[RMDB]
RNA sequence: GGGAACGACUCGAGUAGAGUCGAAAAGCAAUGGGAAUUCAUGAACCAUGUCAGGUCCGGAAGGAAGCAGCAUUAAGUGAAACCUCUCAUGUGCCGCAGGGUUGCCUGGGCCGAGCUAACUGCUUAAGUAACGCUUAGGGUAGCGAAUCGACAGAAGCAUACUGUCGAGGUUCGCCUCGACAGUAUGAAAAGAAACAACAACAACAAC
Reactivity to DMS in 0.01 (KOAc 150mM, MgCl2 10mM, bicine 150mM(pH8.5), 24C), signal-to-noise 3, nucleotides 027 to 156: g010c070a100a050u000g000g010g000a040a300u000u000c070a110u000g020a210a160c010c100a050u000g070u000c040a150g000g030u000c020c020g050g020a110a100g010g020a090a070g000c020a120g020c030a040u000u000a070a210g000u000g010a060a060a070c030c100u000c040u010c020a030u000g000u000g000c020c030g010c080a120g000g030g030u000u000g010c000c030u020g020g010g020c000c010g000a120g000c110u010a070a070c010u020g030c030u040u010a010a070g010u000a050a150c290g010c050u010u000a090g030g020g010u000a000g010c030g000a090a110u010c040g000a080c000a080g000a110a130g030
Reactivity to 2A3 in 0.01 (KOAc 150mM, MgCl2 10mM, bicine 150mM(pH8.5), 24C), signal-to-noise 4, nucleotides 027 to 156: g030c050a050a040u030g000g010g020a030a070u050u050c020a020u080g030a050a060c070c010a010u020g060u090c020a010g030g000u020c010c010g050g100a070a080g030g000a030a000g000c010a000g010c020a020u040u030a090a020g010u010g050a040a030a060c030c020u000c000u000c020a060u090g070u090g140c010c010g040c030a010g060g010g040u120u110g060c000c010u020g000g010g010c010c010g000a020g000c010u050a050a060c040u080g030c000u090u100a050a030g000u030a150a020c040g010c070u020u040a040g000g000g070u030a010g010c020g060a050a070u060c030g030a020c030a100g090a070a010g040

The record gives the reactivity of an RNA of 207 nucleotides to DMS and 2A3.
For 2A3, 3,217 sequencing reads were counted.
DMS adducts were read by reverse transcription with MarathonRT.
The RNA was probed in 150 mM KOAc, 10 mM MgCl2 and 150 mM bicine (pH 8.5) at 24 C.